An RNA of 177 nucleotides, treated with DMS and 2A3 and read out base by base.
It was measured as part of the RMDB library OK2TST.
Values cover nucleotides 27 to 126.
The RNA was probed in 150 mM KOAc, 10 mM MgCl2 and 150 mM bicine (pH 8.5) at 24 C.
[RMDB]
RNA sequence: GGGAACGACUCGAGUAGAGUCGAAAAAUGUGGAAGGUGGGGGAAGAGGUCCGCGCCGAGCGGGUGGAAGACAAGAUCCCCCUCGAUCCCUUCACCGCAGGGAUCUAUGCGGCCGGCAUCGUGGCCCGCGUACAGAGUUUUUCGAAACUCUGUACGCAAAAGAAACAACAACAACAAC
Reactivity to DMS in 0.01 (KOAc 150mM, MgCl2 10mM, bicine 150mM(pH8.5), 24C), signal-to-noise 3, nucleotides 027 to 126: a120u000g020u000g010g000a130a070g020g000u000g010g020g010g000g010a100a080g010a160g030g010u000c010c050g010c130g010c100c110g010a150g000c120g020g020g020u000g010g010a100a080g010a130c180a060a100g000a220u000c010c010c040c020c010u010c070g010a030u000c010c000c000u000u000c080a200c080c080g000c250a040g000g000g010a010u000c030u010a060u000g010c100g000g010c060c040g000g020c130a070u010c070g020u000g000g010c020c040c070
Reactivity to 2A3 in 0.01 (KOAc 150mM, MgCl2 10mM, bicine 150mM(pH8.5), 24C), signal-to-noise 1, nucleotides 027 to 126: a000u070g000u070g040g070a060a130g080g000u080g010g010g010g000g010a000a070g000a010g050g040u130c030c010g010c040g000c050c050g070a090g040c040g020g030g030u080g030g050a090a010g010a080c070a040a070g020a170u030c000c000c010c010c000u010c000g010a030u010c000c010c000u000u120c120a120c040c020g000c020a000g000g030g000a000u000c030u100a160u130g070c020g000g030c000c000g020g030c030a090u080c070g080u040g030g030c000c000c000